[RMDB]
RNA sequence: GGGAACGACUCGAGUAGAGUCGAAAAUGAAGAUAACCAAGAUUUGGUUCUAGAAACCAUAUCUGAAUGUUUAAAAAUUUCUAGAAUUGAAACUCAUCAAUGUAGUAUUGAUCAAGGUUAUGAUUGACCAUAUACGCCUAUUCGUAGGCGUAUAUGGAAAAGAAACAACAACAACAAC
Reactivity to 2A3 in 0.01 (KOAc 150mM, MgCl2 10mM, bicine 150mM(pH8.5), 24C), signal-to-noise 2, nucleotides 027 to 126: u120g020a070a060g020a130u030a020a000c010c000a010a010g020a060u010u030u050g030g000u000u000c010u030a040g000a010a030a010c030c010a010u010a060u120c070u040g090a180a100u150g010u080u240u150a070a130a010a070a060u050u070u000c010u000a010g000a060a010u000u050g030a060a020a040c070u080c080a050u000c020a100a000u050g140u160a150g090u100a030u030u060g010a020u050c060a150a000g040g000u000u030a010u060g100a100u040u130g020a010
Reactivity to DMS in 0.01 (KOAc 150mM, MgCl2 10mM, bicine 150mM(pH8.5), 24C), signal-to-noise 3, nucleotides 027 to 126: u010g030a130a140g010a040u010a010a040c010c010a220a090g000a110u000u000u010g010g020u000u000c010u010a010g010a030a000a020c080c050a210u000a050u020c060u010g000a110a090u010g000u000u000u000a020a050a140a180a230u000u000u000c000u010a030g000a020a010u000u000g000a010a020a050c050u000c150a040u000c020a000a030u000g010u000a140g020u010a040u000u000g020a010u000c120a070a170g000g020u000u000a010u000g010a120u010u000g020a300
Chemical mapping of a 177-nucleotide RNA with 2A3 and DMS.
The RNA was probed in 150 mM KOAc, 10 mM MgCl2 and 150 mM bicine (pH 8.5) at 24 C.
The 2A3 profile rests on 1,413 reads.
DMS adducts were read by reverse transcription with MarathonRT.
High 2A3 reactivity points to a flexible backbone, as in loops and unpaired stretches.